This 177-nucleotide RNA was probed chemically with DMS and 2A3.
Source: RMDB library RFMREP, as collected in RNAgym.
For 2A3 the reverse transcriptase was SuperScript II with manganese.
The 2A3 profile rests on 2,162 reads.
The reactions ran in a buffer of 150 mM KOAc, 10 mM MgCl2 and 150 mM bicine (pH 8.5), at 24 C.

RNA sequence: GGGAACGACUCGAGUAGAGUCGAAAAGAGGAAUGUCUUGUCUUCAUCCGGUUGCCUGCGCCACUGUUCUGGUGGCGUCUGGCACUGGUGCAAGACAGAGCUGUGCUUCCCCGAGAGUGUGCUAAGCGUUAAGGUUUAACUUCGGUUAAACCUUAACAAAAGAAACAACAACAACAAC
Reactivity to DMS in 0.01 (KOAc 150mM, MgCl2 10mM, bicine 150mM(pH8.5), 24C), signal-to-noise 5, nucleotides 027 to 126: g000a070g000g010a120a070u010g010u000c020u000u000g010u000c050u010u000c040a090u010c010c000g010g010u000u010g040c000c000u000g000c000g010c000c000a010c000u000g000u010u010c240u000g000g020u000g000g010c000g020u000c060u000g010g020c000a010c000u000g000g020u000g010c130a010a010g010a010c000a020g010a050g010c050u010g010u000g010c120u000u000c010c000c000c070g010a080g010a080g020u000g000u000g000c060u000a080a130g020c220
Reactivity to 2A3 in 0.01 (KOAc 150mM, MgCl2 10mM, bicine 150mM(pH8.5), 24C), signal-to-noise 2, nucleotides 027 to 126: g110a010g030g030a130a120u070g000u040c000u040u040g010u030c000u140u070c060a060u070c030c020g060g000u210u160g000c010c020u010g030c010g010c000c000a030c020u040g170u300u200c120u300g040g000u000g000g000c000g010u040c000u020g020g000c010a000c010u000g010g000u010g000c020a000a020g000a000c000a000g030a010g000c030u040g040u120g110c030u030u020c000c000c030c000g060a050g010a020g100u090g020u070g080c070u090a140a000g050c030